RNA sequence: GGGAACGACUCGAGUAGAGUCGAAAAGAAGAGCAGGCAGAUAAUCUUGUGCAGUAUGCAUGCUCUUACCUCCACAGGAAGAAAGGCAGCAAAAGAAUAACUGCCACUGCACAAGUGGAGCCGCAGAACUCCACGAGUACUUCGGUACUCGUGGAGUAAAAGAAACAACAACAACAAC
Reactivity to 2A3 in 0.01 (KOAc 150mM, MgCl2 10mM, bicine 150mM(pH8.5), 24C), signal-to-noise 3, nucleotides 027 to 126: g100a010a000g000a010g000c020a040g040g000c000a000g060a240u170a130a150u150c000u020u010g020u030g010c000a010g000u100a050u110g000c020a030u040g000c000u000c010u000u010a080c000c030u040c010c010a140c060a080g110g030a100a030g030a100a110a040g010g000c010a000g000c100a040a070a080a040g090a120a120u050a120a010c010u010g000c000c000a000c000u000g050c000a000c020a020a000g000u000g010g010a030g000c040c040g120c090a010g080a090
Reactivity to DMS in 0.01 (KOAc 150mM, MgCl2 10mM, bicine 150mM(pH8.5), 24C), signal-to-noise 1, nucleotides 027 to 126: g000a000a040g020a020g050c000a010g000g000c020a090g000a090u070a090a010u000c030u010u030g000u040g000c030a000g000u000a150u000g060c010a060u030g040c000u000c000u000u000a070c020c000u000c080c140a090c080a060g000g010a110a010g010a090a090a140g000g020c000a000g000c180a010a130a180a170g010a070a130u000a170a270c000u000g000c020c000a230c030u000g000c000a000c000a010a000g000u000g000g000a080g050c160c010g000c010a070g000a110
Chemical mapping of a 177-nucleotide RNA with 2A3 and DMS.
The RNA was probed in 150 mM KOAc, 10 mM MgCl2 and 150 mM bicine (pH 8.5) at 24 C.
For 2A3, 1,572 sequencing reads were counted.
2A3 adducts were read by reverse transcription with SuperScript II with manganese.
DMS adducts were read by reverse transcription with MarathonRT.